Structure probing data (2A3 and DMS) for a 177-nucleotide construct. It was measured as part of the RMDB library OK1LIB. The DMS profile rests on 5,125 reads.

RNA sequence: GGGAACGACUCGAGUAGAGUCGAAAAGUGCAGAGUGAAAUUCAUAGGUGCGGCGCCAAUGUGGCGAAACGACCCGGUACUCCGCGCAGUCGCGCUGUAAACGUUCUGUGUUGGCGUUCGGGCCUCACGUAGGUAGGCUAUUCGUAGCCUACCUACGAAAAGAAACAACAACAACAAC
Reactivity to 2A3 in 0.01 (KOAc 150mM, MgCl2 10mM, bicine 150mM(pH8.5), 24C), signal-to-noise 2, nucleotides 027 to 126: g130u160g030c060a000g180a010g090u050g120a120a070a100u190u140c050a080u120a150g000g050u080g110c010g030g000c000g000c000c000a050a050u200g040u090g030g000c050g070a050a050a020c040g080a100c000c000c000g030g030u040a030c050u000c010c000g000c010g000c030a000g050u180c090g000c010g000c090u060g100u210a040a030a000c010g030u050u080c000u010g010u000g030u080u160g020g000c040g000u090u170c010g000g000g000c020c020u090c000a050
Reactivity to DMS in 0.01 (KOAc 150mM, MgCl2 10mM, bicine 150mM(pH8.5), 24C), signal-to-noise 3, nucleotides 027 to 126: g070u010g010c110a050g000a050g010u020g020a120a090a100u030u030c110a090u040a070g000g000u000g000c030g000g000c020g010c000c020a070a010u010g030u010g000g020c140g000a040a020a070c100g000a070c020c010c020g020g000u020a030c050u020c040c050g030c040g010c030a060g010u010c150g000c050g000c070u000g010u050a060a070a220c010g000u010u030c010u010g010u030g000u000u010g000g000c050g000u020u030c020g000g000g010c060c000u000c100a070